[RMDB]
RNA sequence: GGGAACGACUCGAGUAGAGUCGAAAAGAUAUGGACAGUCUCAUACAGCGAAGAACUUUGUCGGAAACGACAAAGGGAGCUGUGAGCUGUCCUAAGUCAAAACUGGCUUUGGUUCGCCAAAGCCAGAUCAACUAGCACUCUUCGGAGUGCUAGUUGAAAAAGAAACAACAACAACAAC
Reactivity to 2A3 in 0.01 (KOAc 150mM, MgCl2 10mM, bicine 150mM(pH8.5), 24C), signal-to-noise 3, nucleotides 027 to 126: g010a000u010a020u060g020g000a000c010a020g230u140c030u010c050a090u250a270c200a100g040c030g300a300a010g010a040a010c000u030u010u010g000u000c000g000g020a000a020a020c010g000a000c000a000a000a000g030g010g000a000g000c110u150g010u020g050a020g020c000u000g010u000c000c000u000a000a000g010u010c020a020a000a150a220c010u000g000g010c000u020u000u000g060g070u070u150c300g080c110c030a000a000a000g020c060c000a000g000a010
Reactivity to DMS in 0.01 (KOAc 150mM, MgCl2 10mM, bicine 150mM(pH8.5), 24C), signal-to-noise 2, nucleotides 027 to 126: g000a010u000a120u030g000g000a010c000a000g000u040c000u010c010a060u000a260c270a090g010c010g000a070a160g030a140a160c010u010u000u000g010u000c000g010g000a020a060a070c000g000a000c000a000a010a030g000g000g010a010g050c010u000g020u000g000a010g000c000u000g000u000c020c000u010a010a070g010u010c020a070a070a170a260c010u000g000g010c000u000u000u010g000g010u000u010c280g020c000c000a000a000a000g010c010c000a000g010a020